Structure probing data (2A3 and DMS) for a 177-nucleotide construct. The data come from the RNA Mapping Database (RMDB), library TTRDES. The reactions ran in a buffer of 150 mM KOAc, 10 mM MgCl2 and 150 mM bicine (pH 8.5), at 24 C. For DMS, 2,496 sequencing reads were counted. The 2A3 profile rests on 4,052 reads. 2A3 is a SHAPE reagent: it acylates the 2'-hydroxyl of flexible nucleotides of all four kinds.
RNA sequence: GGGAACGACUCGAGUAGAGUCGAAAAGAUAUGGAUGUCUUACGGGAGCUAUUGGUCGGAAACGACCACUAGCGAAGAACGUACGGGACAUCCUAAGUCAAAAUCCAGCUGGUUCGCCAGCUGGAAACACAACAUGUUGGUUCGCCAACAUGUUGUGAAAAGAAACAACAACAACAAC
Reactivity to 2A3 in 0.01 (KOAc 150mM, MgCl2 10mM, bicine 150mM(pH8.5), 24C), signal-to-noise 1, nucleotides 027 to 126: g000a010u010a000u090g000g000a000u000g000u020c010u070u060a040c010g060g060g060a200g020c000u010a010u040u010g000g000u000c000g000g010a000a000a030c000g000a010c000c000a010c000u020a000g000c000g020a050a010g050a040a020c040g030u090a070c150g090g030g050a010c000a000u000c000c000u000a030a000g000u020c030a030a020a000a300u000c000c000a000g000c000u000g050g120u080u140c300g080c110c010a000g000c000u000g000g000a020a010a000
Reactivity to DMS in 0.01 (KOAc 150mM, MgCl2 10mM, bicine 150mM(pH8.5), 24C), signal-to-noise 2, nucleotides 027 to 126: g010a010u000a080u010g000g000a010u010g000u000c000u000u000a030c000g010g040g010a180g020c000u000a010u000u000g000g030u000c000g010g000a000a040a060c010g030a010c000c000a010c160u000a000g010c000g000a110a140g000a100a210c030g020u000a030c300g020g030g000a010c000a000u010c000c010u000a000a080g000u000c010a130a070a130a150u000c000c000a000g010c040u010g000g010u000u020c280g020c020c000a030g040c000u030g000g000a000a040a140